[RMDB]
RNA sequence: GGGAACGACUCGAGUAGAGUCGAAAAUAGGUAAUAGAACAUUCUUUGACCUGCUGCAAAGAAUGCGGAUCUACCCUUGAGAAUGUUGAAGUUGAAGCUUAUGAGAGAAGACAGGUCUUUGACAUUCAUUAAGCUGGAGCUUCGGCUCCAGCUUAAUAAAAGAAACAACAACAACAAC
Reactivity to DMS in 0.01 (KOAc 150mM, MgCl2 10mM, bicine 150mM(pH8.5), 24C), signal-to-noise 1, nucleotides 027 to 126: u030a040g030g040u000a020a110u030a040g020a170a210c000a000u000u000c000u020u000u000g000a150c030c010u060g030c060u000g020c010a000a000a090g000a000a000u000g040c090g020g010a100u000c120u000a030c080c000c060u050u000g000a150g040a100a120u000g050u010u000g000a070a070g000u010u000g000a170a110g000c030u020u000a190u040g000a080g000a170g020a020a020g000a070c060a000g000g000u020c010u000u000u010g000a010c040a010u010u020c050